[RMDB]
RNA sequence: GGGAACGACUCGAGUAGAGUCGAAAACUGAACAGCCAGGCCUAGAGGAGCACGUGGUGGGGCCGCGCUGCCCUCAGUGUGACCACAUCACGCUGGAGGAUGUAUCUGCGGGGUUGCUGCACCACCAUCAGGCUAAAACAUUCGUGUUUUAGCCUGAAAAAGAAACAACAACAACAAC
Reactivity to DMS in 0.01 (KOAc 150mM, MgCl2 10mM, bicine 150mM(pH8.5), 24C), signal-to-noise 4, nucleotides 027 to 126: c030u010g010a100a130c100a070g000c030c030a060g000g010c040c030u000a100g000a090g010g000a060g010c070a040c090g010u000g000g050u000g010g000g000g010c020c020g000c030g030c040u000g010c050c050c070u000c000a020g010u010g030u000g010a070c110c150a080c070a300u010c000a000c020g000c020u000g010g010a060g010g000a090u010g000u000a120u030c070u000g050c020g000g000g000g000u010u010g020c030u020g000c050a060c010c000a020c030c120a120
Reactivity to 2A3 in 0.01 (KOAc 150mM, MgCl2 10mM, bicine 150mM(pH8.5), 24C), signal-to-noise 2, nucleotides 027 to 126: c030u020g030a000a040c020a050g000c030c000a040g030g040c000c030u120a080g010a070g110g040a050g060c020a020c150g020u010g000g000u000g010g030g000g000c010c030g050c030g020c010u050g000c000c020c020u030c010a010g000u000g010u010g020a020c000c120a040c170a130u020c000a000c000g000c030u020g070g060a020g020g030a040u130g050u150a110u100c060u070g010c040g030g060g010g000u060u110g040c030u100g050c010a000c020c010a010c020c000a050